[RMDB]
RNA sequence: GGGAACGACUCGAGUAGAGUCGAAAACGGAAGCUGAGAAGGCGGCUUACGAGGCGGCUAAGGUUGAUCUAGUUGAGCUUAAGACUCCAAACUACACACCAGAGCAAGCCCUUCUUAUUGCUAAAGGUAAGACAUUCUCAGAGGUGCUAGGCAACGGCACUCCCUGUUUAUUCGUAAACAGGGAGUGAAAAGAAACAACAACAACAAC
Reactivity to 2A3 in 0.01 (KOAc 150mM, MgCl2 10mM, bicine 150mM(pH8.5), 24C), signal-to-noise 3, nucleotides 027 to 156: c010g020g020a020a010g050c020u000g020a000g010a040a020g130g040c130g060g000c010u060u050a040c090g050a070g030g000c040g010g020c040u030a080a060g020g030u060u070g050a170u040c030u020a020g010u030u050g010a000g000c020u150u210a160a030g050a170c000u000c010c030a110a070a020c000u030a020c010a000c000a000c020c010a020g010a010g170c040a080a030g000c000c020c010u040u000c010u000u060a110u070u160g000c040u090a100a030a010g040g000u020a020a000g030a030c020a050u100u040c030u010c080a000g010a010g040g030u050g020c030u040a040g050g000c050a040a050c050g060g000
Reactivity to DMS in 0.01 (KOAc 150mM, MgCl2 10mM, bicine 150mM(pH8.5), 24C), signal-to-noise 2, nucleotides 027 to 156: c030g000g020a150a090g020c060u000g000a110g040a050a070g020g040c100g010g050c020u010u000a050c040g020a270g020g020c060g000g010c100u000a060a070g030g020u000u010g020a150u010c060u000a090g050u000u000g010a030g010c030u010u010a110a150g020a090c000u000c020c080a050a040a050c010u000a100c120a130c060a060c010c010a080g000a300g000c030a040a080g020c030c040c030u000u000c010u000u010a070u000u000g000c040u020a090a140a190g000g000u010a020a070g010a080c070a100u000u010c040u000c010a120g010a140g020g060u000g020c010u000a030g000g000c050a030a050c020g030g000
This 207-nucleotide RNA was probed chemically with 2A3 and DMS.
It was measured as part of the RMDB library OK3TST.